An RNA of 177 nucleotides, treated with 2A3 and DMS and read out base by base.
[RMDB]
RNA sequence: GGGAACGACUCGAGUAGAGUCGAAAAUGGGCGUUGCUGCUUAGAUUUUCCAUAUUUGCUGCCCAGGAAAGAUGGCUAGCAAGCAACCUCAAGCUGUCAUGUCACCUGGAACUGAACUGAAGUGCGCCGCAUUAGGCGAUUUCGAUCGCCUAAUGCGAAAAGAAACAACAACAACAAC
Reactivity to 2A3 in 0.01 (KOAc 150mM, MgCl2 10mM, bicine 150mM(pH8.5), 24C), signal-to-noise 4, nucleotides 027 to 126: u070g010g000g040c050g030u080u040g020c040u030g010c020u080u070a080g010a200u030u080u090u030c020c000a040u070a140u090u110u110g030c030u070g000c000c000c030a010g050g050a050a090a020g140a000u060g020g000c040u100a010g000c050a080a060g030c010a030a150c030c050u090c020a050a010g010c020u030g040u140c010a070u040g040u050c030a070c080c030u030g000g010a070a040c030u030g020a050a010c050u060g030a110a030g100u030g030c030g020c020
Reactivity to DMS in 0.01 (KOAc 150mM, MgCl2 10mM, bicine 150mM(pH8.5), 24C), signal-to-noise 2, nucleotides 027 to 126: u010g000g010g040c060g010u000u030g000c000u020g000c000u020u010a040g030a190u020u050u040u010c010c010a100u030a070u020u040u000g020c040u000g020c040c010c030a020g040g040a020a060a090g000a040u000g020g000c010u040a120g000c000a160a090g000c040a030a060c060c090u000c020a070a170g000c030u000g000u010c050a000u020g000u010c060a090c040c030u050g000g000a080a030c100u030g000a050a010c110u000g010a110a040g010u000g000c090g020c110
The 2A3 profile rests on 2,278 reads. For DMS, 2,631 sequencing reads were counted.